[RMDB]
Conditions: 150 mM KOAc, 10 mM MgCl2 and 150 mM bicine (pH 8.5), 24 C. Chemical mapping of a 207-nucleotide RNA with 2A3 and DMS. For 2A3 the reverse transcriptase was SuperScript II with manganese.
RNA sequence: GGGAACGACUCGAGUAGAGUCGAAAAGGAGCUCGACAUGUUCUUAGGUCAACUAAGGGCAUGUGUAUGUUCUAAGUUGACCUUAGGGCAUACUGUAGCGGUUACCUGUUGUAAUCGCUACAGAUAGGUGUUACAACAGGUAAUGCCUGUCCGAGCACGAGACGUCAAUGUUCGCAUUGACGUUUCGAAAAGAAACAACAACAACAAC
Reactivity to 2A3 in 0.01 (KOAc 150mM, MgCl2 10mM, bicine 150mM(pH8.5), 24C), signal-to-noise 4, nucleotides 027 to 156: g130g010a080g000c000u000c000g010a010c010a050u000g010u010u000c000u020u030a000g000g010u020c000a010a010c010u030a030a070g000g010g000c010a010u040g060u060g010u110a030u010g000u000u000c000u010a030a030g000u010u020g010a010c000c000u010u010a000g000g000g000c000a000u010a010c010u000g000u000a000g000c000g000g000u000u000a020c050c090u150g120u170u200g000u030a000a000u000c000g000c000u000a000c010a000g010a000u020a000g000g000u000g010u010u000a010c020a280a050c050a190g300g000u010a000a000u010g000c000c000u000g000u030c120c060g000a000g000c010a010
Reactivity to DMS in 0.01 (KOAc 150mM, MgCl2 10mM, bicine 150mM(pH8.5), 24C), signal-to-noise 4, nucleotides 027 to 156: g000g010a130g020c010u010c010g050a110c050a020u000g020u000u000c000u000u000a020g010g010u000c080a050a070c000u010a140a050g010g010g010c000a010u000g010u000g030u010a010u000g010u000u000c010u000a100a070g020u000u000g010a080c080c000u000u000a010g010g010g020c010a020u000a040c010u000g010u000a010g020c000g000g010u000u000a000c000c080u000g000u020u000g010u000a000a010u000c010g020c000u000a040c010a030g010a050u000a010g020g030u000g030u010u000a020c000a190a190c220a210g030g040u010a020a010u000g010c000c000u010g000u000c020c030g010a030g010c000a160

Values cover nucleotides 27 to 156. For 2A3, 11,879 sequencing reads were counted.